[RMDB]
Source: RMDB library OK1LIB, as collected in RNAgym. The record gives the reactivity of an RNA of 177 nucleotides to 2A3 and DMS. DMS (dimethyl sulfate) methylates the pairing face of unpaired adenines and cytosines. For 2A3 the reverse transcriptase was SuperScript II with manganese. The 2A3 profile rests on 45,907 reads. Reactivities are given for positions 27 through 126. Conditions: 150 mM KOAc, 10 mM MgCl2 and 150 mM bicine (pH 8.5), 24 C.

RNA sequence: GGGAACGACUCGAGUAGAGUCGAAAAGCUCGGAGACGAGCAAGGCUGACAAAACUCUGUCCCAACCUCCACGUGGUGUCGGCUGGAUAAUGCUGCAUUAUGUUGCAUUUAUCAACUGGGAAGCAAAAGGUAAUUAUGAUUUCGAUCAUAAUUACCUAAAAGAAACAACAACAACAAC
Reactivity to 2A3 in 0.01 (KOAc 150mM, MgCl2 10mM, bicine 150mM(pH8.5), 24C), signal-to-noise 9, nucleotides 027 to 126: g000c000u000c000g020g020a110g010a050c010g000a000g000c000a000a060g030g000c010u030g010a020c030a030a140a060a080c070u060c050u100g070u030c000c000c000a020a030c010c020u050c030c030a120c110g080u130g010g010u020g020u030c000g020g000c010u030g030g010a010u010a040a010u030g000c010u020g000c020a070u120u120a130u300g020u020u020g000c010a020u050u080u110a040u030c010a010a030c040u050g010g010g030a050a020g040c100a060a080a070
Reactivity to DMS in 0.01 (KOAc 150mM, MgCl2 10mM, bicine 150mM(pH8.5), 24C), signal-to-noise 8, nucleotides 027 to 126: g010c000u000c000g000g000a220g000a200c010g010a030g000c000a060a030g010g010c030u010g010a020c020a050a120a170a100c120u010c080u020g000u020c010c020c020a080a080c050c020u010c020c030a110c140g010u010g010g010u000g000u010c040g010g010c020u010g000g000a030u000a010a020u000g000c000u000g010c010a190u030u040a090u020g010u010u010g010c010a020u010u020u020a020u000c010a080a060c110u000g010g000g000a100a060g010c220a060a060a120